An RNA of 207 nucleotides, treated with 2A3 and DMS and read out base by base.
The DMS profile rests on 1,785 reads.
Values cover nucleotides 27 to 156.

RNA sequence: GGGAACGACUCGAGUAGAGUCGAAAAGGUAUGCCCCUUACAGCUCUAGGUAUAAUAACCGACAAAAAUAACGACGAAGUUUUGGUAGAUCCAAUGUUGAUCGCUAACCAACAAGCAAGUAUCAACUACGCUUUCGCUUAGAACAUACUAAAGCUACGCUCACUUACUAGUUCGCUAGUAAGUGAGCAAAAGAAACAACAACAACAAC
Reactivity to 2A3 in 0.01 (KOAc 150mM, MgCl2 10mM, bicine 150mM(pH8.5), 24C), signal-to-noise 3, nucleotides 027 to 156: g060g040u120a050u130g060c000c040c000c040u030u070a050c020a030g020c020u010c020u050a060g020g020u090a150u050a210a070u080a040a080c020c030g040a020c110a030a120a030a060a040u120a110a010c040g080a010c030g070a050a010g030u030u030u060u050g020g030u010a020g010a100u000c020c040a090a120u160g030u050u070g030a000u010c020g010c000u040a050a080c000c030a020a040c010a010a070g000c010a060a030g010u030a030u060c020a050a060c010u070a070c050g010c060u020u130u120c060g010c020u020u050a010g030a160a040c030a080u120a040c010u080a100a020a030g020c000u040a040c100
Reactivity to DMS in 0.01 (KOAc 150mM, MgCl2 10mM, bicine 150mM(pH8.5), 24C), signal-to-noise 1, nucleotides 027 to 156: g010g030u000a070u000g000c020c010c010c040u000u000a060c040a100g050c000u000c030u000a110g020g000u000a090u000a080a050u020a180a110c070c050g000a200c130a020a050a050a110a190u040a030a070c120g010a060c030g020a060a070g030u000u030u010u000g010g020u000a060g000a030u010c000c020a150a160u040g040u020u000g000a010u000c030g000c080u000a170a140c030c010a000a030c060a020a110g000c060a070a060g000u000a050u000c020a050a060c020u000a050c220g010c010u020u000u000c060g050c030u000u000a080g020a110a110c160a100u000a010c040u000a000a110a050g000c000u000a100c100
For 2A3 the reverse transcriptase was SuperScript II with manganese.